[RMDB]
RNA sequence: GGGAACGACUCGAGUAGAGUCGAAAACGUCUCUCCUGUUCGGUGAACCCUCCCGGGUGUUUCCUCUUCCUAGGUCCGGAGUCGACCUCCAUCUGAUCCGUCCUGGCUCUCUUCGCCGGGGGAGCUCCAAGGACCAUGUUCGCAUGGUCCAAAAGAAACAACAACAACAAC
Reactivity to DMS in 0.01 (KOAc 150mM, MgCl2 10mM, bicine 150mM(pH8.5), 24C), signal-to-noise 4, nucleotides 027 to 129: c100g010u000c070u000c000u030c000c000u040g000u000u000c080g000g000u000g040a110a110c070c000c030u040c030c060c020g030g020g000u000g030u030u010u000c010c020u000c000u020u000c050c030u020a050g020g040u030c000c020g020g010a000g010u000c040g000a110c000c000u000c000c000a070u000c050u050g020a070u000c060c040g030u000c020c000u010g020g010c040u000c040u000c080u010u020c100g010c090c000g000g000g000g000g000a050g040c000u010c020c030a100a110
Reactivity to 2A3 in 0.01 (KOAc 150mM, MgCl2 10mM, bicine 150mM(pH8.5), 24C), signal-to-noise 8, nucleotides 027 to 129: c030g050u020c000u010c010u020c020c000u030g050u070u080c060g020g030u080g070a080a070c010c000c010u060c010c030c010g000g000g000u060g030u010u060u040c010c010u020c020u050u040c010c000u040a060g000g040u000c040c030g050g010a020g030u040c020g030a080c000c000u030c000c010a110u050c050u080g040a040u010c020c010g040u040c030c010u000g020g000c010u010c000u000c000u160u130c050g030c040c010g010g000g000g000g000a010g020c010u010c030c010a050a070